[RMDB]
RNA sequence: GGGAACGACUCGAGUAGAGUCGAAAAACUCUGGGGAGAGAAGGGAGGGUCGGAUGGGAAGAGUAAAUCCUACGGGAAUCCCCCGGUUCCCCUUAUGUCCAGCCCCUCCCCGGUCCGAGAGAAGGGGGAACGGACCAGUUCGCUGGUCCGAAAAGAAACAACAACAACAAC
Reactivity to 2A3 in 0.01 (KOAc 150mM, MgCl2 10mM, bicine 150mM(pH8.5), 24C), signal-to-noise 6, nucleotides 027 to 129: a000c060u040c030u040g000g000g000g000a060g020a000g040a070a080g030g030g010a070g020g010g000u050c020g020g020a060u090g030g010g020a070a060g060a030g050u140a050a070a070u050c000c000u020a060c110g010g000g030a020a080u080c010c000c000c000c000g010g000u040u030c020c020c010c000u040u130a080u150g050u000c010c040a020g010c010c000c000c010u020c000c000c000c000g020g030u070c020c000g020a020g000a010g000a050a060g010g000g000g000g010a020a060
Reactivity to DMS in 0.01 (KOAc 150mM, MgCl2 10mM, bicine 150mM(pH8.5), 24C), signal-to-noise 6, nucleotides 027 to 129: a110c110u030c010u020g000g000g000g000a060g010a140g050a090a080g000g030g030a120g040g020g070u030c050g000g000a040u040g020g040g020a080a030g020a080g030u040a000a090a100u020c020c010u050a110c120g000g000g010a060a080u060c040c000c000c000c070g030g010u030u030c010c000c000c040u040u070a060u070g050u030c020c020a100g070c120c010c020c020u000c010c030c020c110g030g020u040c070c010g010a070g010a070g020a070a090g020g020g010g030g030a090a150